[RMDB]
RNA sequence: GGGAACGACUCGAGUAGAGUCGAAAAUCUGGCCGCCUCGUGCCUACGAUGGGCUAGGGAAAUGCCGUGACGAGACACGCACUGGGUGGCCAUUGCGUCUGCGGUAGAUCCGCCGAUUCCACAGCCCAUCUUUCGCGUAGUUCGCUACGCGAAAGAUAAAAGAAACAACAACAACAAC
Reactivity to DMS in 0.01 (KOAc 150mM, MgCl2 10mM, bicine 150mM(pH8.5), 24C), signal-to-noise 2, nucleotides 027 to 126: u050c030u000g000g000c020c000g030c010c010u000c300g020u000g060c020c150u030a040c090g000a100u050g000g000g000c000u000a170g000g010g030a070a060a070u020g000c000c030g000u010g000a160c140g000a290g000a090c160a070c150g010c090a060c000u000g000g020g020u000g000g030c000c000a020u000u030g000c080g000u000c020u000g010c010g000g020u000a070g010a140u050c020c040g020c010c010g020a070u010u000c040c010a120c030a080g010c020c010c000
Reactivity to 2A3 in 0.01 (KOAc 150mM, MgCl2 10mM, bicine 150mM(pH8.5), 24C), signal-to-noise 4, nucleotides 027 to 126: u050c030u010g000g010c000c000g030c000c000u020c020g000u000g020c010c010u060a090c060g120a110u130g070g020g010c050u050a100g090g030g100a020a060a080u160g000c010c030g030u030g030a070c060g040a010g010a080c030a000c080g000c000a010c000u020g020g000g000u030g000g010c000c000a000u010u050g010c030g020u000c020u020g010c000g020g000u120a110g060a210u060c010c010g000c010c010g010a020u040u050c030c020a070c030a050g030c000c000c000